Structure probing data (DMS and 2A3) for a 177-nucleotide construct.
2A3 adducts were read by reverse transcription with SuperScript II with manganese.
For DMS the reverse transcriptase was MarathonRT.
Conditions: 150 mM KOAc, 10 mM MgCl2 and 150 mM bicine (pH 8.5), 24 C.
RNA sequence: GGGAACGACUCGAGUAGAGUCGAAAACAGGGGAUGACUGUCGGAAGAUGGUCAGUCCCGGGUGCAUAAGGAGUGGUGGAUGGUUCAGGACCGAAAGGUAGCAGACAAAAGCCACCGCGCGGUGCAGGUAUCGAUACAAGUUCGCUUGUAUCGAUACAAAAGAAACAACAACAACAAC
Reactivity to DMS in 0.01 (KOAc 150mM, MgCl2 10mM, bicine 150mM(pH8.5), 24C), signal-to-noise 3, nucleotides 027 to 126: c040a140g020g020g010g010a120u000g000a020c000u010g020u000c000g010g060a100a150g010a020u000g000g000u000c010a020g010u000c000c000c020g000g030g000u010g000c010a030u000a120a150g000g010a130g000u000g010g040u000g000g000a110u000g030g000u000u000c010a300g000g000a030c010c000g000a110a050a140g010g030u000a020g000c010a270g000a020c000a040a060a070a180g000c030c010a020c000c010g000c040g000c030g020g000u000g000c020a070g010
Reactivity to 2A3 in 0.01 (KOAc 150mM, MgCl2 10mM, bicine 150mM(pH8.5), 24C), signal-to-noise 1, nucleotides 027 to 126: c030a010g000g000g060g000a000u020g010a000c010u000g000u000c000g030g130a070a030g000a050u000g010g010u000c000a000g060u040c000c000c000g020g060g020u070g000c050a050u070a190a150g150g010a100g040u010g000g010u020g020g020a090u060g030g000u040u100c000a010g000g070a000c000c010g050a010a080a000g010g000u030a010g030c010a000g030a030c020a000a250a050a050g010c000c000a000c000c000g030c010g000c000g040g010u050g010c030a040g070